[RMDB]
RNA sequence: GGGAACGACUCGAGUAGAGUCGAAAAUAACAUAUUCACCAGCUACAAUUUUAGCUGGUAGUGUCUACACUAAUAGCUGCCUUGUAUCGUCUGAUGGACAACCUGGCGGUGAUGCUAUUAGUUUGAGUAAGCUCAUCGUUCGCGAUGAGCAAAAGAAACAACAACAACAAC
Reactivity to 2A3 in 0.01 (KOAc 150mM, MgCl2 10mM, bicine 150mM(pH8.5), 24C), signal-to-noise 6, nucleotides 027 to 129: u140a030a020c050a020u100a080u050u170c040a000c000c000a000g000c000u020a020c050a300a280u100u110u100u060a030g000c000u000g000g010u010a030g000u010g020u000c030u060a000c020a000c020u010a000a000u000a010g000c020u010g050c030c000u020u040g060u060a160u120c040g030u010c020u100g210a100u210g120g030a020c000a010a080c000c010u000g000g000c000g060g040u090g010a050u260g000c000u020a000u000u000a000g000u010u010u130g010a010g010u030a040a060
Reactivity to DMS in 0.01 (KOAc 150mM, MgCl2 10mM, bicine 150mM(pH8.5), 24C), signal-to-noise 4, nucleotides 027 to 129: u060a130a110c090a060u020a040u040u040c140a030c000c030a020g000c020u000a040c300a130a180u030u050u050u020a040g020c010u010g010g030u010a020g020u030g000u000c050u000a110c080a070c020u000a040a020u010a000g000c010u020g000c000c000u040u000g030u020a060u040c120g030u040c010u000g060a220u000g020g000a000c000a090a070c000c000u030g000g000c020g000g020u020g000a090u030g000c030u030a030u020u000a000g010u000u020u080g010a060g030u000a000a010